An RNA of 207 nucleotides, treated with 2A3 and read out base by base. The data come from the RNA Mapping Database (RMDB), library M2RFPK.
RNA sequence: GGGAACGACUCGAGUAGAGUCGAAAAAAGUAUUGCUAUAGUUAGGGUUGCGCUUGCCUAUUUAGGCAUACUUCUCAGGAUGGCGCGUUGCAGUCCAACAAGAUCCAGGGACUGUACAGAAUUUUCCAAAACGCGUCGAGGUUCGCCUCGACGCGAAGGUUGUAUGAUCGUUCGCGAUCAUACAACCAAAAGAAACAACAACAACAAC
Reactivity to 2A3 in 0.01 (KOAc 150mM, MgCl2 10mM, bicine 150mM(pH8.5), 24C), signal-to-noise 1, nucleotides 027 to 156: a000a000g100u090a070u050u090g020c000u030a010u070a280g170u100u100a080g000g000g010u050u080g030c090g010c030u040u150g100c000c000u030a090u050u180u110a050g050g000c000a000u010a020c000u120u000c060u010c040a010g110g030a110u100g040g020c040g000c020g040u080u100g000c000a000g000u020c020c000a020a090c040a100a100g110a130u120c080c090a010g000g000g000a000c000u000g050u000a010c020a000g060a030a040u080u090u070u000c020c000a030a110a060a050c020g000c000g020u000c000g000a000g000g000u080u130c200g050c010c000u000c000g000a000c000g000c000g000a000a000